[RMDB]
RNA sequence: GGGAACGACUCGAGUAGAGUCGAAAAAAGUGCGGCAGAAACAUUGACUUUAUUGAGUCUGUUUUCGCGGCUAAUGACGUUUAGAUCCCCACCGAUUUGCCCACUAAUCUGGUUAGCCUGGAGUACAGAUUAAUGAGCUAUUCGUAGCUCAUUAAUCAAAAGAAACAACAACAACAAC
Reactivity to DMS in 0.01 (KOAc 150mM, MgCl2 10mM, bicine 150mM(pH8.5), 24C), signal-to-noise 8, nucleotides 027 to 126: a100a080g000u000g010c050g020g030c030a080g010a040a020a020c020a050u010u010g010a020c010u000u000u010a120u020u010g010a020g000u000c000u010g010u000u000u000u000c070g020c060g000g010c030u000a040a060u010g000a110c140g000u000u000u000a080g010a160u000c020c000c010c070a110c110c070g000a130u000u000u010g010c020c010c020a070c060u000a060a070u000c030u000g010g000u000u000a060g010c030c010u000g010g010a120g010u000a080c150a120
Reactivity to 2A3 in 0.01 (KOAc 150mM, MgCl2 10mM, bicine 150mM(pH8.5), 24C), signal-to-noise 6, nucleotides 027 to 126: a000a000g210u300g140c070g030g000c030a020g040a030a030a000c010a050u100u170g010a020c010u090u150u170a190u220u300g020a020g000u000c020u040g030u000u040u020u040c050g010c030g020g000c020u040a110a060u120g070a040c040g000u030u080u100a090g010a130u060c010c000c000c000a010c000c030g030a050u050u040u120g020c000c000c000a030c030u050a030a070u020c040u060g060g000u020u020a010g040c010c020u030g060g030a060g020u060a060c030a040